[RMDB]
RNA sequence: GGGAACGACUCGAGUAGAGUCGAAAAUACCCUCACCCUCUGGCCUACCUUAAGAACGGGAUAGUUCUUCAGGCUGUUUGCGGGUUCCGUUAGGUGGCGCUGUAGAGGCCACUCGGGCUCGACACUGUGUCACAGUAACUUUCGAGUUACUGUGACAAAAAGAAACAACAACAACAAC
Reactivity to DMS in 0.01 (KOAc 150mM, MgCl2 10mM, bicine 150mM(pH8.5), 24C), signal-to-noise 3, nucleotides 027 to 126: u020a140c010c000c010u000c120a150c050c010c030u010c040u030g010g000c050c030u000a160c030c020u000u000a040a020g000a020a020c030g000g020g020a130u030a090g020u000u000c010u020u000c090a040g000g030c080u000g010u010u000u000g000c020g010g020g010u000u010c000c010g030u010u030a090g010g020u000g010g020c020g010c020u000g030u020a160g000a170g000g010c010c020a020c010u010c030g010g000g010c000u010c040g020a060c090a080c070u000g010
Reactivity to 2A3 in 0.01 (KOAc 150mM, MgCl2 10mM, bicine 150mM(pH8.5), 24C), signal-to-noise 2, nucleotides 027 to 126: u080a020c000c000c010u010c010a050c020c000c000u060c040u050g060g020c000c010u040a030c020c000u040u040a020a000g000a020a000c020g020g000g170a060u140a060g000u010u000c000u010u010c000a010g020g000c060u040g040u050u080u110g010c010g010g000g000u120u240c000c000g050u120u160a060g040g060u010g000g010c150g020c190u070g040u150a090g040a070g190g060c000c010a000c010u090c000g010g000g010c000u010c030g060a060c030a010c080u060g030